[RMDB]
RNA sequence: GGGAACGACUCGAGUAGAGUCGAAAAACCCCUUCAGCGAACGGAAGAGACUGGAAGCCCCAGAGGAAGACCAUAGCCAUGGGGAGAGAUGCUAGGAGUGGGGGGCGACCGGAACGAGGAGAAAAGUGGAGCCUGGCCUUCGGGCCAGGCAAAAGAAACAACAACAACAAC
Reactivity to 2A3 in 0.01 (KOAc 150mM, MgCl2 10mM, bicine 150mM(pH8.5), 24C), signal-to-noise 1, nucleotides 027 to 129: a010c000c000c000c100u000u060c020a070g000c000g050a080a000c000g010g000a030a010g000a000g040a080c020u150g010g030a010a070g050c000c000c000c000a020g030a030g060g030a000a060g000a090c030c060a020u160a000g100c040c020a010u020g000g000g050g000a020g010a020g000a010u020g010c080u030a000g020g020a010g030u010g010g000g000g000g000g000c020g100a040c000c000g020g000a020a010c040g010a000g060g040a080g040a000a000a050a000g040u060g000g000a030
Reactivity to DMS in 0.01 (KOAc 150mM, MgCl2 10mM, bicine 150mM(pH8.5), 24C), signal-to-noise 1, nucleotides 027 to 129: a000c020c000c000c040u020u030c120a180g040c060g060a040a030c100g010g000a040a000g010a110g050a150c120u050g050g020a100a170g000c070c040c040c040a020g000a080g030g030a030a050g040a040c070c070a100u040a070g010c070c100a120u020g030g000g020g000a090g100a120g000a110u080g040c010u030a100g020g020a030g000u080g020g010g060g010g000g130c080g000a030c120c020g020g020a030a040c090g000a020g000g020a060g000a080a090a050a050g070u000g000g010a030

An RNA of 170 nucleotides, treated with 2A3 and DMS and read out base by base. It was measured as part of the RMDB library 15KLIB. The DMS profile rests on 2,653 reads. DMS adducts were read by reverse transcription with MarathonRT. The reactions ran in a buffer of 150 mM KOAc, 10 mM MgCl2 and 150 mM bicine (pH 8.5), at 24 C.